[RMDB]
RNA sequence: GGGAACGACUCGAGUAGAGUCGAAAAUUCCUACCCUUUCUUACCUGUGGCCGGCAUGGUCCCAGCCUCCUCGCUGGCGCCGGCUGGGCAACAUUCCGAGGGGACCGUCCUCCUCGGUAAUGGCGAAUCACUCCUUUCUUCGGAAAGGAGAAAAGAAACAACAACAACAAC
Reactivity to DMS in 0.01 (KOAc 150mM, MgCl2 10mM, bicine 150mM(pH8.5), 24C), signal-to-noise 5, nucleotides 027 to 129: u020u020c000c000u000a110c050c010c020u000u010u010c050u000u000a170c080c030u030g030u060g000g000c070c040g030g080c020a100u050g000g040u000c300c010c020a030g030c020c160u030c170c110u040c130g010c040u010g050g000c140g010c020c010g030g010c020u030g010g010g060c090a110a090c000a040u000u000c000c000g050a000g020g040g000g010a090c060c140g000u000c010c000u030c000c000u000c020g000g040u050a040a000u020g020g030c210g020a080a110u050c000a190
Reactivity to 2A3 in 0.01 (KOAc 150mM, MgCl2 10mM, bicine 150mM(pH8.5), 24C), signal-to-noise 7, nucleotides 027 to 129: u020u000c000c000u020a100c010c000c000u080u110u100c040u110u130a140c020c040u100g030u150g180g020c000c000g010g000c030a130u190g070g060u130c040c000c020a000g030c000c010u150c010c010u100c080g000c020u030g030g000c020g000c000c000g040g010c000u010g000g000g000c010a060a030c000a040u020u000c000c000g000a010g020g000g010g010a040c080c030g080u110c010c000u020c000c000u000c010g000g010u030a020a000u030g000g000c030g060a050a060u110c030a030